[RMDB]
RNA sequence: GGGAACGACUCGAGUAGAGUCGAAAAAAAAAAGAUAUGGAUUUGUCAAAAUAUUUCGACGUUGAAAUCUGCUCGGAAACGAGCAGAUGGAGUCGAAUAUGAACCGGCAAAUCCUAAGUCAAAAAAACUAAGCAUAUAGGUUCGCCUAUAUGCUUAGAAAAGAAACAACAACAACAAC
Reactivity to DMS in 0.01 (KOAc 150mM, MgCl2 10mM, bicine 150mM(pH8.5), 24C), signal-to-noise 1, nucleotides 027 to 126: a000a020a270a060a160a150g010a020u010a300u000g000g000a010u000u010u000g020u000c000a080a170a110a050u000a010u000u000u010c000g030a020c000g000u000u030g020a150a090a010u000c000u000g010c000u000c000g000g000a140a070a290c020g030a000g000c000a000g020a000u010g000g030a070g020u010c000g020a000a000u000a000u030g000a120a150c300c160g000g010c010a000a010a010u000c000c000u000a020a080g020u020c000a020a020a180a160a030a020a080